This 177-nucleotide RNA was probed chemically with 2A3 and DMS.
[RMDB]
RNA sequence: GGGAACGACUCGAGUAGAGUCGAAAACAUCUUUACCCAUGCCUCUUACAUAUCCUGCAGCGGAAGGGUUCGUUGUGAAAGUGGUGAGAAUCUUGUCCUACUACAGGGGUUAAGCCAAGCCUUGAAACAUUGCGUCUAUAUUCGUAUAGACGCAAUGAAAAGAAACAACAACAACAAC
Reactivity to 2A3 in 0.01 (KOAc 150mM, MgCl2 10mM, bicine 150mM(pH8.5), 24C), signal-to-noise 3, nucleotides 027 to 126: c030a110u100c020u070u180u160a130c000c010c010a020u060g050c010c000u080c010u100u070a070c010a060u140a060u130c010c030u040g040c010a020g040c020g040g030a050a030g050g000g000u010u050c040g000u030u130g050u050g130a180a110a050g080u050g060g060u060g040a080g040a050a020u040c000u050u120g080u040c000c010u040a130c010u030a020c060a040g050g000g000g040u040u110a060a020g000c000c040a040a010g000c020c010u070u150g100a100a060a030
Reactivity to DMS in 0.01 (KOAc 150mM, MgCl2 10mM, bicine 150mM(pH8.5), 24C), signal-to-noise 6, nucleotides 027 to 126: c110a050u000c060u010u010u010a140c020c000c020a100u010g010c040c020u020c010u000u000a080c120a080u010a100u000c040c030u000g020c060a050g020c300g010g000a110a060g000g010g010u000u000c050g010u000u010g020u010g000a050a100a100g020u010g010g020u000g010a090g010a060a040u010c030u010u000g020u000c030c010u000a070c080u000a070c110a050g010g020g020g000u010u000a050a110g010c070c050a050a110g010c040c040u000u010g010a130a090a190

The RNA was probed in 150 mM KOAc, 10 mM MgCl2 and 150 mM bicine (pH 8.5) at 24 C.
For 2A3 the reverse transcriptase was SuperScript II with manganese.
For DMS, 7,234 sequencing reads were counted.